An RNA of 177 nucleotides, treated with 2A3 and DMS and read out base by base.

RNA sequence: GGGAACGACUCGAGUAGAGUCGAAAAUCAGGUGUCUUCGGACACCUGAAAAGAAAGCGGAAAACACCGAAAUAAAACGGUGAGGGCCGCAACCCACCAUAAAAACUUCUGGGUUCGCCCAGAAGAAGACAUUUAUAUAGUUCGCUAUAUAAAUGUCAAAAGAAACAACAACAACAAC
Reactivity to 2A3 in 0.01 (KOAc 150mM, MgCl2 10mM, bicine 150mM(pH8.5), 24C), signal-to-noise 3, nucleotides 027 to 126: u000c000a000g010g000u000g010u000c020u040u090c280g050g000a000c000a000c000c000u010g000a000a000a020a000g040a030a050a010g000c010g000g020a000a030a040a030c000a010c010c000g060a020a220a060u260a040a100a020a010c020g000g000u010g010a030g040g090g020c020c000g000c000a020a020c020c000c010a020c020c010a120u240a150a150a020a040a090c000u000u000c000u000g010g000g010u050u060c180g050c030c000c000a000g030a000a000g000a000a000
Reactivity to DMS in 0.01 (KOAc 150mM, MgCl2 10mM, bicine 150mM(pH8.5), 24C), signal-to-noise 2, nucleotides 027 to 126: u000c010a010g030g010u010g030u000c000u000u020c190g070g000a010c000a000c000c000u010g000a000a020a040a170g010a110a120a150g020c000g000g000a000a020a070a110c000a050c000c010g010a110a070a110u000a040a140a150a110c010g010g020u000g000a070g000g000g000c010c010g010c020a090a060c020c000c000a100c240c140a130u020a040a020a110a220a090c000u000u020c000u000g000g000g010u000u010c240g010c000c010c000a010g000a000a000g000a100a020
For DMS, 1,473 sequencing reads were counted.
Reactivities are given for positions 27 through 126.
The reactions ran in a buffer of 150 mM KOAc, 10 mM MgCl2 and 150 mM bicine (pH 8.5), at 24 C.
For DMS the reverse transcriptase was MarathonRT.